[RMDB]
Chemical mapping of a 177-nucleotide RNA with DMS and 2A3.
RNA sequence: GGGAACGACUCGAGUAGAGUCGAAAACAUUGUGCGGGCUUGCUUCCCUGAUCGGCAAUCGUAUCCGCGUGGCUCCGAAACAGUUGGAUGACUGGAUUGAGGUUCCGAACCUCUGGGGCGCUGUGAACGUAGUAAAUGCUUUCGAGCAUUUACUACGAAAAGAAACAACAACAACAAC
Reactivity to DMS in 0.01 (KOAc 150mM, MgCl2 10mM, bicine 150mM(pH8.5), 24C), signal-to-noise 6, nucleotides 027 to 126: c080a090u010u000g020u010g010c020g020g010g000c080u000u000g000c060u010u010c030c020c020u010g010a080u000c080g010g010c070a080a060u000c110g010u010a080u010c030c030g010c060g030u010g000g010c030u000c010c020g010a140a090a110c040a040g000u000u000g000g020a110u010g000a040c030u000g000g000a170u000u000g000a040g000g010u000u000c160c120g000a070a080c020c010u000c020u010g010g000g000g010c050g010c080u000g000u010g010a080a190
Reactivity to 2A3 in 0.01 (KOAc 150mM, MgCl2 10mM, bicine 150mM(pH8.5), 24C), signal-to-noise 4, nucleotides 027 to 126: c040a080u140u170g060u100g080c050g000g000g030c040u030u050g000c000u050u040c020c010c000u020g060a110u110c040g030g000c030a040a040u100c060g050u080a080u060c020c020g020c030g030u040g140g000c020u000c020c010g040a080a090a060c020a010g020u040u070g230g140a220u300g030a040c010u010g000g030a130u040u110g000a000g000g000u030u060c100c090g020a050a020c000c000u020c000u030g010g010g040g000c030g000c030u050g050u070g130a120a020